[RMDB]
RNA sequence: GGGAACGACUCGAGUAGAGUCGAAAAAGCACUGGUACGAUACGUCGUACCAGUUCAGUCGUUGGGAUGGAACGCAAUUAAAUACAUGUGUGACGUGUAUUUGCGAACGACGUAAUUAUUUUUCAAAAUCACGCUAUCGUGUUCGCACGAUAGCGAAUCGUGCAAUAAUCUUCGGAUUAUUGCACGAAAAAGAAACAACAACAACAAC
Reactivity to DMS in 0.01 (KOAc 150mM, MgCl2 10mM, bicine 150mM(pH8.5), 24C), signal-to-noise 3, nucleotides 027 to 156: a100g000c090a050c000u000g000g020u000a010c000g030a090u000a060c300g030u000c000g040u000a000c000c000a010g010u000u000c030a150g010u000c010g010u000u000g010g000g010a190u000g000g010a090a180c000g010c030a090a260u000u000a050a040a010u000a010c000a040u000g030u000g050u000g020a110c050g030u020g020u000a010u000u010u000g010c130g010a040a140c000g010a090c010g010u000a050a060u010u000a120u000u000u000u000u000c040a030a040a130a140u000c090a120c040g020c000u000a010u000c000g040u000g010u020u010c270g020c020a000c000g010a020u000a000g020c000g020a010a000
Reactivity to 2A3 in 0.01 (KOAc 150mM, MgCl2 10mM, bicine 150mM(pH8.5), 24C), signal-to-noise 5, nucleotides 027 to 156: a000g110c070a000c020u000g000g000u000a000c010g010a020u030a040c190g100u010c000g000u010a000c000c010a000g000u000u000c010a010g000u000c020g010u010u040g070g040g060a180u130g100g120a140a050c030g000c010a010a000u210u140a090a120a010u020a000c020a000u010g080u020g140u190g250a060c020g000u000g000u020a010u000u020u060g000c000g020a010a010c020g030a010c030g040u050a090a060u090u110a100u070u070u010u010u060c110a090a060a020a060u170c070a080c100g000c000u010a010u020c010g000u010g020u040u020c070g020c090a000c000g000a010u000a000g000c000g000a010a010
This 207-nucleotide RNA was probed chemically with DMS and 2A3. For DMS the reverse transcriptase was MarathonRT. The DMS profile rests on 6,293 reads. For 2A3, 3,613 sequencing reads were counted. The reactions ran in a buffer of 150 mM KOAc, 10 mM MgCl2 and 150 mM bicine (pH 8.5), at 24 C.